[RMDB]
RNA sequence: GGGAACGACUCGAGUAGAGUCGAAAAGGGCCACCCAGUGUGGGCUCAGGAAGGGAAGGAAUGUGACCAAGGCUGGGUGUGGCUGGGGAGAGCACAGCCAGUUGUGGGUUUUUCUUGGGGCCCAGAUGUUCACUGUGAAGUUCGCUUCACAGUGAACAAAAGAAACAACAACAACAAC
Reactivity to 2A3 in 0.01 (KOAc 150mM, MgCl2 10mM, bicine 150mM(pH8.5), 24C), signal-to-noise 4, nucleotides 027 to 126: g050g000g020c030c020a030c000c010c020a020g030u050g050u080g140g050g000c000u010c030a010g060g050a070a020g060g010g080a050a030g060g060a120a120u190g100u140g070a040c010c020a050a020g040g010c000u010g000g090g020u010g000u010g060g080c040u060g020g000g010g010a160g000a000g020c020a000c010a030g090c010c010a020g000u030u040g060u120g040g030g010u070u010u000u000u040c030u010u070g030g020g020g000c000c000c000a010g020a030u040
Reactivity to DMS in 0.01 (KOAc 150mM, MgCl2 10mM, bicine 150mM(pH8.5), 24C), signal-to-noise 1, nucleotides 027 to 126: g040g000g020c010c040a090c000c020c000a130g000u010g040u000g030g000g010c030u010c020a090g000g010a060a130g030g000g030a140a050g000g000a090a130u020g010u010g000a060c090c010a220a250g030g000c040u010g010g010g000u030g010u000g030g050c040u000g000g000g010g000a140g010a110g000c070a030c000a040g000c000c000a030g000u000u010g010u020g000g000g000u000u000u000u040u010c030u000u000g000g000g000g000c060c000c030a120g000a060u000
Chemical mapping of a 177-nucleotide RNA with 2A3 and DMS. The 2A3 profile rests on 2,894 reads. For DMS, 1,870 sequencing reads were counted. Values cover nucleotides 27 to 126. The RNA was probed in 150 mM KOAc, 10 mM MgCl2 and 150 mM bicine (pH 8.5) at 24 C. DMS adducts were read by reverse transcription with MarathonRT.